[RMDB]
The data come from the RNA Mapping Database (RMDB), library OK2TST. Chemical mapping of a 177-nucleotide RNA with DMS. For DMS, 1,598 sequencing reads were counted. Conditions: 150 mM KOAc, 10 mM MgCl2 and 150 mM bicine (pH 8.5), 24 C.

RNA sequence: GGGAACGACUCGAGUAGAGUCGAAAAAAGCUGGAUGUAGAGAGGCCAGUGUGAGGCAAGACCUGGGCCUGUCUAGGCUGCUGGGAGACAGGCAGGAAUCUGGCCAGGGAAGGUUGCCAUGAGACAACGUACCUUUUCACUUCGGUGAAAAGGUACGAAAAGAAACAACAACAACAAC
Reactivity to DMS in 0.01 (KOAc 150mM, MgCl2 10mM, bicine 150mM(pH8.5), 24C), signal-to-noise 2, nucleotides 027 to 126: a030a090g010c010u000g010g010a040u010g040u010a110g010a070g000a120g010g000c000c010a020g000u000g010u010g020a070g020g000c000a060a040g020a120c010c010u000g030g020g010c000c000u000g010u010c030u010a110g010g030c020u000g000c040u000g000g010g000a050g000a000c040a040g000g030c010a050g020g000a070a070u010c050u000g000g010c010c010a090g000g010g020a120a020g020g000u000u000g030c040c030a110u000g040a110g010a090c160a060a170